[RMDB]
Record summary: Chemical mapping of a 177-nucleotide RNA with DMS and 2A3.
RNA sequence: GGGAACGACUCGAGUAGAGUCGAAAAAGCAUGAGUAUCUACGGAUACUCAUGCACUCAGAUCAGAAGGUGACUGUGGCUUUGGGUGGAUAUUAAUCAGCCACAGCACUGCCUGGUCAGAAAGAGAACAGUGUGGGGAUUUUCGAAUCCCCACACUGAAAAGAAACAACAACAACAAC
Reactivity to DMS in 0.01 (KOAc 150mM, MgCl2 10mM, bicine 150mM(pH8.5), 24C), signal-to-noise 2, nucleotides 027 to 126: a040g020c000a020u000g000a020g000u000a000u020c000u020a140c150g030g000a000u000a000c000u000c000a000u000g020c000a000c010u000c030a060g020a000u000c000a010g000a150a300g000g000u010g000a120c010u000g020u000g000g050c000u020u030u060g010g000g060u000g040g050a060u160a040u000u020a020a080u040c170a060g000c000c000a000c000a010g040c010a000c000u000g050c300c000u010g000g000u000c000a150g010a050a090a060g000a110g000a170a230
Reactivity to 2A3 in 0.01 (KOAc 150mM, MgCl2 10mM, bicine 150mM(pH8.5), 24C), signal-to-noise 4, nucleotides 027 to 126: a000g000c000a000u000g010a020g010u000a000u000c000u010a060c240g090g000a000u000a000c000u020c000a000u000g000c000a010c010u010c010a020g000a010u000c000a000g020a100a050g120g030u020g190a300c000u000g010u010g020g030c050u080u210u120g100g030g040u230g070g080a090u110a110u190u300a230a080u040c020a000g000c020c000a000c000a000g000c000a000c000u000g020c020c000u010g000g000u000c000a000g050a020a090a000g150a000g010a040a020
For 2A3 the reverse transcriptase was SuperScript II with manganese. For DMS, 2,096 sequencing reads were counted. DMS (dimethyl sulfate) methylates the pairing face of unpaired adenines and cytosines.